[RMDB]
RNA sequence: GGGAACGACUCGAGUAGAGUCGAAAAGAAGUCGACUAGCUAGCUGACUAGUCGAUCCUAGUCGACUAGGAGAUCAGAGCUUCGACUGAAGGAGACUAGUCCUUCCUCUGAGACUAGAGUCGAUCGACUAGAGAGGAGAUCAGAGCUAGCUUCGAAGACCACAAUCCCUAUUCGUAGGGAUUGUGGUAAAAGAAACAACAACAACAAC
Reactivity to DMS in 0.01 (KOAc 150mM, MgCl2 10mM, bicine 150mM(pH8.5), 24C), signal-to-noise 2, nucleotides 027 to 156: g040a100a080g000u000c000g040a050c050u000a030g030c000u010a050g030c030u000g010a150c000u000a010g010u000c010g000a030u000c080c020u000a050g000u000c020g040a110c050u000a030g050g030a110g000a210u000c030a090g010a040g030c000u000u010c050g050a120c090u000g000a090a060g000g020a110g030a140c070u000a030g010u000c000c010u000u000c020c050u000c040u010g010a240g000a140c010u000a040g000a170g020u000c080g000a090u010c020g000a040c030u000a040g000a130g000a140g000g000a130g030a140u000c020a090g010a130g010c040u000a040g000c000u000u000c040g010a100a160g030
Reactivity to 2A3 in 0.01 (KOAc 150mM, MgCl2 10mM, bicine 150mM(pH8.5), 24C), signal-to-noise 3, nucleotides 027 to 156: g100a060a010g050u010c020g010a030c060u060a010g010c000u000a010g020c010u020g050a060c000u010a000g000u010c000g000a000u000c010c000u030a030g000u040c000g040a090c060u040a040g080g060a150g010a040u070c050a010g040a010g050c000u110u100c100g180a180c140u100g020a050a020g020g030a010g040a090c090u110a070g100u020c000c000u050u040c020c000u000c030u010g040a050g040a090c020u020a020g010a020g150u160c080g040a060u040c040g010a010c010u020a000g010a010g000a030g220g100a120g010a090u110c070a050g020a010g060c000u000a000g000c000u030u000c020g000a010a000g040